RNA sequence: GGGAACGACUCGAGUAGAGUCGAAAAGAGCUGCAGUAUGUCUAGGCCAGCUUCUGUCAGUCAUUGACUGAGACCUAUUCUGGGAGCAUCAAGUCCCCUGCACAUCUGUCCCACCCAUGGGUGUGCACUGUGGGCUCCAGUGGCCUGAGAAAGCCCAGCUCGGGACGCCAUUCGUGGCGUCCCGAGCAAAAGAAACAACAACAACAAC
Reactivity to 2A3 in 0.01 (KOAc 150mM, MgCl2 10mM, bicine 150mM(pH8.5), 24C), signal-to-noise 2, nucleotides 027 to 156: g000a000g000c030u050g020c030a070g010u300a040u270g180u030c050u070a010g000g000c000c010a060g030c050u040u070c070u150g130u010c000a010g050u090c130a300u170u300g010a000c000u000g010a010g040a090c050c120u100a210u090u170c000u080g010g000g010a090g030c060a130u150c080a120a050g140u200c000c000c000c000u010g010c000a000c000a000u000c020u030g120u110c070c040c020a050c060c100c000a050u150g010g020g000u000g000u000g030c020a030c080u070g020u200g000g000g000c000u020c020c010a060g050u050g010g000c000c000u040g000a040g050a050a060a040g000c000c010c000a000
The data come from the RNA Mapping Database (RMDB), library OK3TST. An RNA of 207 nucleotides, treated with 2A3 and read out base by base. Reactivities are given for positions 27 through 156. The RNA was probed in 150 mM KOAc, 10 mM MgCl2 and 150 mM bicine (pH 8.5) at 24 C. 2A3 adducts were read by reverse transcription with SuperScript II with manganese.